[RMDB]
RNA sequence: GGGAACGACUCGAGUAGAGUCGAAAACAGACGAUUGCCCCAGGAAUGAGUGAAGAUGGAGGGGUUCAGCAAGGCCCCCCUGCCACCCCAGACUCACACAUGUAGAUUCUGGCCCCAGUCUCGUAAGUCAUAUUGCGCGAUUCGUCGCGCAAUAUGAAAAAGAAACAACAACAACAAC
Reactivity to 2A3 in 0.01 (KOAc 150mM, MgCl2 10mM, bicine 150mM(pH8.5), 24C), signal-to-noise 4, nucleotides 027 to 126: c020a010g080a010c030g060a050u030u190g010c000c000c000c000a020g080g080a090a080u110g040a060g050u040g030a050a120g060a070u120g000g040a090g010g040g000g030u060u150c040a100g040c050a060a110g060g000c020c000c000c000c010c010u010g040c020c030a030c020c030c000c020a000g040a010c010u020c030a010c000a010c010a040u140g050u100a040g040a100u050u040c010u010g060g000c000c000c010c020a030g010u030c000u000c040g100u130a060a040g060
Reactivity to DMS in 0.01 (KOAc 150mM, MgCl2 10mM, bicine 150mM(pH8.5), 24C), signal-to-noise 3, nucleotides 027 to 126: c070a080g010a090c070g030a070u010u020g010c040c020c000c040a150g000g020a080a110u010g000a100g000u010g000a090a100g030a080u010g000g040a120g000g000g000g020u000u030c110a140g040c170a110a120g010g000c040c000c000c010c040c000u000g000c030c030a040c000c000c010c000a080g000a090c100u000c010a080c060a130c090a040u010g020u010a120g000a150u010u020c020u000g010g010c010c040c030c060a100g000u020c010u000c020g000u010a080a120g010